[RMDB]
RNA sequence: GGGAACGACUCGAGUAGAGUCGAAAAGAGACUUGCCACGAUUUACACAUUAUUUUUUAUUCCGUUUAAUUCUUUAUCGUCCAUCAUCUUAGCAUCAAUGAAUUAAGCGGUAAUUCAUUGAUUAGUACGACGUCGAUUUAUUCGUAAAUCGACGUCGAAAAGAAACAACAACAACAAC
Reactivity to 2A3 in 0.01 (KOAc 150mM, MgCl2 10mM, bicine 150mM(pH8.5), 24C), signal-to-noise 3, nucleotides 027 to 126: g210a000g020a000c000u010u050g070c040c030a140c100g070a110u050u090u300a030c080a000c000a020u080u140a060u160u300u020u020u100u110a110u140u000c000c020g020u020u010u120a110a050u050u050c050u020u090u000a100u130c120g080u100c020c000a140u250c000a030u000c070u070u060a050g050c000a020u010c030a000a020u030g020a000a000u000u010a060a050g100c110g030g010u040a010a010u000u000c020a010u020u020g030a030u020u100a040g050u050a000
Background:
Conditions: 150 mM KOAc, 10 mM MgCl2 and 150 mM bicine (pH 8.5), 24 C. The record gives the reactivity of an RNA of 177 nucleotides to 2A3. The 2A3 profile rests on 1,249 reads. Values cover nucleotides 27 to 126. Source: RMDB library OK1LIB, as collected in RNAgym.